[RMDB]
RNA sequence: GGGAACGACUCGAGUAGAGUCGAAAAACGUGCGAAAGCACGGUACUGUAGUGAGGAUAUACGAGCUCGAUAGAGCGGCGAUCCAUAUAUACAUGAGGAUCACCCAUGUAGAAGGCACUUCAGUACACGUAGUAGUCGACUUCGGUCGACUACUACGAAAAGAAACAACAACAACAAC
Reactivity to 2A3 in 0.01 (KOAc 150mM, MgCl2 10mM, bicine 150mM(pH8.5), 24C), signal-to-noise 2, nucleotides 027 to 126: a000c000g010u000g020c020g060a130a040a030g020c000a000c000g000g010u020a000c000u010g010u000a000g000u010g030a090g020g030a090u020a000u010a070c000g010a010g000c000u010c010g180a300u180a300g000a010g000c010g020g000c010g030a000u000c000c020a010u030a010u020a000u010a140c090a050u090g060a130g110g030a130u130c080a250c120c020c010a010u050g010u000a030g030a130a030g130g000c010a000c010u020u010c000a020g000u010a010c050a000
Reactivity to DMS in 0.01 (KOAc 150mM, MgCl2 10mM, bicine 150mM(pH8.5), 24C), signal-to-noise 2, nucleotides 027 to 126: a160c000g010u000g000c000g000a210a100a240g000c010a010c000g000g000u010a000c000u010g000u000a000g020u010g040a140g010g000a040u010a080u010a090c010g030a300g000c010u010c000g010a230u000a080g000a010g000c010g000g020c030g000a010u000c000c000a170u010a080u020a080u000a050c160a010u000g000a090g000g010a120u000c200a110c020c000c120a020u000g000u000a000g010a130a150g000g000c010a010c000u000u000c000a010g000u000a010c040a180